RNA sequence: GGGAACGACUCGAGUAGAGUCGAAAAGAUAUGGAACCUCAGGUGACAUGAUGGUCGUCGGAAACGACGAUACCAUCAACAGCACCGAGGUUCCUAAGUCAAAACCAGGACGGUUCGCCGUCCUGGAGGAGAGUAAACUGUUCGCAGUUUACUCUCCAAAAGAAACAACAACAACAAC
Reactivity to DMS in 0.01 (KOAc 150mM, MgCl2 10mM, bicine 150mM(pH8.5), 24C), signal-to-noise 4, nucleotides 027 to 126: g000a040u000a160u000g000g000a000a010c000c000u010c010a080g080g010u000g010a040c100a150u000g000a020u000g000g020u000c000g000u000c000g030g010a040a040a080c000g010a020c000g000a100u010a040c020c010a000u000c010a050a110c250a170g000c000a010c000c000g010a000g000g010u000u000c000c000u000a010a050g000u000c020a170a100a130a210c010c000a000g000g000a030c000g000g010u000u010c230g030c020c010g010u000c000c000u000g000g000a010
Reactivity to 2A3 in 0.01 (KOAc 150mM, MgCl2 10mM, bicine 150mM(pH8.5), 24C), signal-to-noise 4, nucleotides 027 to 126: g010a010u030a000u070g000g010a000a010c030c020u020c180a290g000g000u020g030a130c180a300u260g000a010u000g030g000u010c000g000u000c000g010g010a030a010a000c000g000a000c010g000a010u060a070c010c000a000u010c020a030a060c140a070g040c000a000c000c000g000a000g000g000u000u000c000c000u000a000a010g000u000c010a000a020a100a150c000c000a000g010g000a000c010g000g080u080u150c300g030c100c000g000u000c000c000u000g000g000a000

An RNA of 177 nucleotides, treated with DMS and 2A3 and read out base by base. Reactivities are given for positions 27 through 126. Conditions: 150 mM KOAc, 10 mM MgCl2 and 150 mM bicine (pH 8.5), 24 C. It was measured as part of the RMDB library TTRDES.